[RMDB]
RNA sequence: GGGAACGACUCGAGUAGAGUCGAAAAGGGUUGUCGAGAAGCCGGAUGGGGUCGACGCCUCUAUUAGCGUUGAGGAGUCGCUUUGGGGUGACAGCCUGGUCAUAGACAUCAGUGUGGACGGCUUGUCCAUAACUGGGAAUUUCGAUUCCCAGUUAUGAAAAGAAACAACAACAACAAC
Reactivity to 2A3 in 0.01 (KOAc 150mM, MgCl2 10mM, bicine 150mM(pH8.5), 24C), signal-to-noise 6, nucleotides 027 to 126: g040g000g000u040u020g030u040c040g030a040g050a220a010g030c020c010g020g030a080u120g020g020g020g040u120c010g000a010c010g010c020c000u000c010u040a190u130u200a080g100c090g070u040u060g020a010g000g010a020g020u010c010g000c040u130u050u090g030g000g000g010u050g010a020c010a000g000c000c000u020g030g000u070c030a090u100a130g070a050c020a060u110c060a060g060u020g030u070g120g020a010c010g010g030c000u030u070g040u050c020
Reactivity to DMS in 0.01 (KOAc 150mM, MgCl2 10mM, bicine 150mM(pH8.5), 24C), signal-to-noise 9, nucleotides 027 to 126: g000g000g010u000u000g010u000c020g010a170g000a070a070g010c010c020g010g010a140u010g000g000g000g010u010c020g010a010c010g000c000c010u010c010u000a060u000u010a150g010c300g000u000u000g000a020g010g010a050g010u000c010g010c280u000u000u000g000g000g000g010u000g010a030c020a040g010c020c010u000g000g010u000c090a130u010a100g010a070c110a100u010c100a100g000u010g010u000g000g000a080c030g010g000c040u000u000g000u010c060
The record gives the reactivity of an RNA of 177 nucleotides to 2A3 and DMS.
It was measured as part of the RMDB library OK2TST.
Conditions: 150 mM KOAc, 10 mM MgCl2 and 150 mM bicine (pH 8.5), 24 C.
For 2A3, 11,757 sequencing reads were counted.
For DMS, 37,323 sequencing reads were counted.
For 2A3 the reverse transcriptase was SuperScript II with manganese.